[RMDB]
RNA sequence: GGGAACGACUCGAGUAGAGUCGAAAAGGCGCCGCCCAGUGCUCUGCAGCCGGGUUUGAUGCGAUCGAAGAGCGACCACCGCCUGGCCACCCAGUUCCGCCAGCAGGAGGAGCGCAGUGGCUACAAACUGAUUAUCCAUGUUCGCAUGGAUAAUCAGAAAAGAAACAACAACAACAAC
Reactivity to DMS in 0.01 (KOAc 150mM, MgCl2 10mM, bicine 150mM(pH8.5), 24C), signal-to-noise 4, nucleotides 027 to 126: g010g000c030g040c080c100g000c020c000c000a130g000u010g000c020u010c060u010g020c060a180g020c030c040g010g000g010u000u000u000g010a090u000g010c080g000a070u010c080g000a170a070g000a080g000c030g010a100c050c040a110c090c050g000c050c050u010g020g010c000c030a020c020c300c040a300g000u000u000c020c010g000c020c000a170g030c180a130g030g010a040g000g010a040g010c030g040c300a080g000u010g000g020c020u010a040c140a090a080a160
Reactivity to 2A3 in 0.01 (KOAc 150mM, MgCl2 10mM, bicine 150mM(pH8.5), 24C), signal-to-noise 2, nucleotides 027 to 126: g050g010c000g030c000c080g000c020c020c010a040g040u100g080c030u030c080u190g080c070a030g040c010c000g040g000g010u030u170u180g110a100u100g040c080g040a100u080c040g040a080a030g030a030g080c030g040a090c000c030a040c010c010g000c000c020u020g010g000c000c000a010c010c000c000a010g010u030u010c010c020g030c030c010a110g080c070a100g170g000a030g000g000a000g020c000g000c010a010g020u000g020g000c000u010a030c020a010a090a020
Annotation:
The record gives the reactivity of an RNA of 177 nucleotides to DMS and 2A3. Reactivities are given for positions 27 through 126. For 2A3, 2,941 sequencing reads were counted. It was measured as part of the RMDB library OK2TST. 2A3 adducts were read by reverse transcription with SuperScript II with manganese.